[RMDB]
RNA sequence: GGGAACGACUCGAGUAGAGUCGAAAAGGCGGGAGACAGCUGUGCAAACAAGUCCCUGUGGCAGGAUGCGGUGAAGGGCGCUGCCCGUGACGCCAGCCAGGGAAGGGGACUGAAUCUUGCUGAAGGGAUAUCGCACAUACUUCGGUAUGUGCGAUAUAAAAGAAACAACAACAACAAC
Reactivity to DMS in 0.01 (KOAc 150mM, MgCl2 10mM, bicine 150mM(pH8.5), 24C), signal-to-noise 3, nucleotides 027 to 126: g000g020c070g020g000g000a100g020a170c070a040g010c040u000g020u000g010c140a080a100a090c120a110a110g010u000c000c000c000u000g000u010g010g000c010a060g010g000a120u000g030c040g010g000u010g000a140a180g000g000g000c020g010c220u010g000c010c010c000g000u000g000a080c050g000c010c050a130g010c040c030a040g010g010g020a090a090g000g010g000g010a040c010u000g000a070a070u000c040u010u000g020c030u010g000a130a070g010g010g010
Reactivity to 2A3 in 0.01 (KOAc 150mM, MgCl2 10mM, bicine 150mM(pH8.5), 24C), signal-to-noise 2, nucleotides 027 to 126: g090g010c070g010g010g030a050g020a020c030a050g020c070u160g000u100g130c070a020a110a100c020a070a010g030u010c000c000c010u080g030u090g060g000c040a040g050g100a190u160g050c010g040g010u040g030a050a020g050g020g010c300g110c300u170g020c000c000c000g020u010g040a030c000g020c030c020a000g000c000c000a040g140g010g020a060a090g010g010g000g000a000c000u010g000a030a020u000c050u010u060g000c030u040g040a050a010g060g010g000
The data come from the RNA Mapping Database (RMDB), library OK2TRN. The record gives the reactivity of an RNA of 177 nucleotides to DMS and 2A3. DMS adducts were read by reverse transcription with MarathonRT. For 2A3 the reverse transcriptase was SuperScript II with manganese. Reactivities are given for positions 27 through 126.